[RMDB]
RNA sequence: GGGAACGACUCGAGUAGAGUCGAAAAGAUAUGGACUGGGACCCGACUCCUCAUGGUGAUGACCAAACUUUAUCUCGGAAACGAGAUAAAGUUUGCAAGCCAUGGUCAGUCGCCCAGUCCUAAGUCAGAUGUUCCAAAGGUUCGCCUUUGGAACAUCAAAAGAAACAACAACAACAAC
Reactivity to DMS in 0.01 (KOAc 150mM, MgCl2 10mM, bicine 150mM(pH8.5), 24C), signal-to-noise 1, nucleotides 027 to 126: g040a090u000a300u000g010g000a020c000u000g000g000g000a300c280c300c110g010a000c000u000c060c010u020c020a000u010g000g030u000g050a060u000g000a300c300c000a000a010a000c000u000u000u000a020u000c000u000c010g000g000a020a160a090c020g000a010g030a010u010a000a000a000g000u000u000u020g000c040a040a300g000c020c000a010u000g040g010u010c060a010g040u000c000g010c000c000c010a000g000u000c000c000u010a000a000g010u000c050a130